The record gives the reactivity of an RNA of 170 nucleotides to 2A3 and DMS.
For DMS the reverse transcriptase was MarathonRT.
For 2A3, 70,996 sequencing reads were counted.
Conditions: 150 mM KOAc, 10 mM MgCl2 and 150 mM bicine (pH 8.5), 24 C.
Values cover nucleotides 27 to 129.
The DMS profile rests on 58,591 reads.
RNA sequence: GGGAACGACUCGAGUAGAGUCGAAAAUUGUCUACAAUAAUAAAUUGUUAGCCAAGAAGGAGCUUUCAGGCCAGUGCUUUAAAAUACUCUAUAAGGGCAAUGUGACGCAUGAUGCUAGCUCUGCCAUAACGCUAUUGGUUCGCCAAUAGCAAAAGAAACAACAACAACAAC
Reactivity to 2A3 in 0.01 (KOAc 150mM, MgCl2 10mM, bicine 150mM(pH8.5), 24C), signal-to-noise 9, nucleotides 027 to 129: u020u010g010u000c000u020a010c030a020a010u180a140a040u190a160a190a040u030u020g050u090u090a010g000c000c000a010a020g070a040a030g070g010a010g010c000u040u090u110c070a030g050g010c010c010a020g010u000g020c010u050u070u090a030a100a010a020u150a070c020u030c030u080a110u080a290a120g050g010g000c070a040a040u100g040u080g040a020c040g010c030a030u120g040a040u130g080c010u010a000g000c000u010c020u010g000c000c000a060u080a100a030c080
Reactivity to DMS in 0.01 (KOAc 150mM, MgCl2 10mM, bicine 150mM(pH8.5), 24C), signal-to-noise 9, nucleotides 027 to 129: u030u010g000u020c010u020a030c030a000a010u040a140a090u050a050a030a030u020u020g020u000u000a000g010c030c020a050a000g020a090a090g000g000a030g010c000u010u030u020c080a010g030g020c010c000a140g000u030g000c020u040u010u030a040a060a040a080u030a100c050u010c030u060a060u020a120a080g030g010g030c050a030a030u000g030u040g000a070c110g040c040a080u000g010a110u040g000c010u020a060g020c010u000c030u010g030c050c050a050u050a040a040c190